[RMDB]
RNA sequence: GGGAACGACUCGAGUAGAGUCGAAAAGGUAGCAGAGAAGAGACUAGACUUCAGACUAGAUAGUAUCACACUACGGGUACAUAGUAGAGACAUACAUAGAUGAGUAUGACACAUCAGAGCUGCCAUGCAGUCCCUAUGGCUUCGGCCAUAGGGACUGAAAAGAAACAACAACAACAAC
Reactivity to 2A3 in 0.01 (KOAc 150mM, MgCl2 10mM, bicine 150mM(pH8.5), 24C), signal-to-noise 1, nucleotides 027 to 126: g010g000u020a000g000c040a000g120a000g030a260a000g010a000g000a070c040u090a030g050a050c000u080u010c160a020g020a130c010u050a000g030a110u130a060g020u080a050u110c010a040c010a060c250u240a040c070g000g000g000u020a020c000a010u010a100g030u040a020g010a010g020a090c000a050u090a000c020a020u160a040g120a190u150g030a070g020u060a010u000g070a060c000a020c000a090u040c040a010g020a010g090c020u010g000c010c000a010u130g020
Reactivity to DMS in 0.01 (KOAc 150mM, MgCl2 10mM, bicine 150mM(pH8.5), 24C), signal-to-noise 2, nucleotides 027 to 126: g000g020u010a050g000c000a110g010a150g000a070a060g000a140g000a070c050u000a050g000a170c050u000u000c140a120g010a100c050u000a080g020a080u000a140g010u000a050u000c070a160c090a090c090u000a030c160g030g000g000u000a030c080a040u010a090g020u000a040g010a070g000a070c070a040u000a050c030a120u000a080g000a110u010g020a090g020u000a010u000g000a060c160a100c030a060u010c030a000g000a090g000c020u000g010c000c020a100u000g000